The record gives the reactivity of an RNA of 207 nucleotides to 2A3 and DMS.
For 2A3, 3,759 sequencing reads were counted.
Conditions: 150 mM KOAc, 10 mM MgCl2 and 150 mM bicine (pH 8.5), 24 C.
For DMS the reverse transcriptase was MarathonRT.

RNA sequence: GGGAACGACUCGAGUAGAGUCGAAAAUCUUCAUCGUCGCAUGCAUGCAUGCAAUUUGGUUUUCCGCUUCCUUCUUCUGAGUGGAUAUUGUGACCAUUUCUCCAUCCUGUCAUAGCGACAAAGCUGAUGGUUUCCAGGAAUGGCUGCAUUGGGUAGGAUUACCGAAAGAGUUCGCUCUUUCGGUAAUAAAAGAAACAACAACAACAAC
Reactivity to 2A3 in 0.01 (KOAc 150mM, MgCl2 10mM, bicine 150mM(pH8.5), 24C), signal-to-noise 5, nucleotides 027 to 156: u030c020u180u140c050a140u110c060g230u110c110g010c010a010u010g010c030a060u140g010c010a010u020g000c030a060a110u130u070u100g070g020u050u040u050u020c010c000g000c010u050u060c010c030u040u140c030u120u030c050u110g050a030g030u070g020g020a040u030a080u100u100g050u050g030a040c000c000a020u010u010u020c040u000c010c000a010u010c000c020u010g050u060c040a090u070a280g080c060g020a030c010a010a130a020g040c110u060g010a010u010g050g000u040u110u050c070c040a000g020g010a030a020u010g020g000c020u020g000c030a040u030u110g100g000g020u040a060g010g060
Reactivity to DMS in 0.01 (KOAc 150mM, MgCl2 10mM, bicine 150mM(pH8.5), 24C), signal-to-noise 2, nucleotides 027 to 156: u000c040u010u000c120a090u010c080g000u000c060g000c020a040u010g010c040a100u000g040c010a050u000g000c000a020a040u000u000u000g030g020u000u000u000u000c010c060g000c050u000u010c040c040u000u000c070u000u000c050u000g010a070g070u000g010g020a080u000a040u000u000g030u000g000a030c020c010a020u000u000u000c010u000c030c010a060u000c140c010u000g000u010c020a100u000a110g010c070g020a190c110a060a060a180g000c060u000g000a100u000g020g010u010u000u010c060c060a070g030g000a030a050u000g030g010c020u000g010c020a100u010u010g020g010g020u000a160g010g010